[RMDB]
RNA sequence: GGGAACGACUCGAGUAGAGUCGAAAAGUCAUGAAUAUGGAUGUUAGUCUCCAUAGACAUAGGCUCUCUCUUAAGGAGUUGAUGAUGUAUGCCGCUGAUCCAGCCAUGCACAUUGCCUCCUCUAACGCGAUAACACAUACUUCGGUAUGUGUUAUCGAAAAGAAACAACAACAACAAC
Reactivity to 2A3 in 0.01 (KOAc 150mM, MgCl2 10mM, bicine 150mM(pH8.5), 24C), signal-to-noise 6, nucleotides 027 to 126: g010u000c000a000u010g010a030a010u010a000u010g010g020a010u080g100u190u190a140g090u070c010u000c020c000a000u010a010g000a030c000a010u040a110g000g000c000u000c000u000c000u000c000u040u100a050a020g010g000a000g000u020u010g010a010u000g030a050u010g000u010a000u010g100c140c070g000c040u020g040a290u130c110c010a000g010c020c000a000u010g010c000a000c000a010u000u010g000c010c000u000c020c000u010c020u040a060a030c080g020
Reactivity to DMS in 0.01 (KOAc 150mM, MgCl2 10mM, bicine 150mM(pH8.5), 24C), signal-to-noise 6, nucleotides 027 to 126: g020u000c010a010u000g000a040a160u000a010u000g000g000a030u010g020u010u020a160g020u010c090u000c010c010a010u000a010g000a300c000a010u000a100g030g000c000u000c070u000c030u000c020u010u010a100a020g000g010a030g010u000u000g000a000u000g010a120u000g030u000a010u000g010c200c190g020c020u000g010a160u010c200c060a040g010c050c010a020u000g000c010a020c000a010u000u000g000c240c000u000c000c000u000c090u000a040a080c240g010

The data come from the RNA Mapping Database (RMDB), library 15KREP. An RNA of 177 nucleotides, treated with 2A3 and DMS and read out base by base. Values cover nucleotides 27 to 126. The RNA was probed in 150 mM KOAc, 10 mM MgCl2 and 150 mM bicine (pH 8.5) at 24 C. For DMS the reverse transcriptase was MarathonRT. For 2A3 the reverse transcriptase was SuperScript II with manganese. The 2A3 profile rests on 13,777 reads.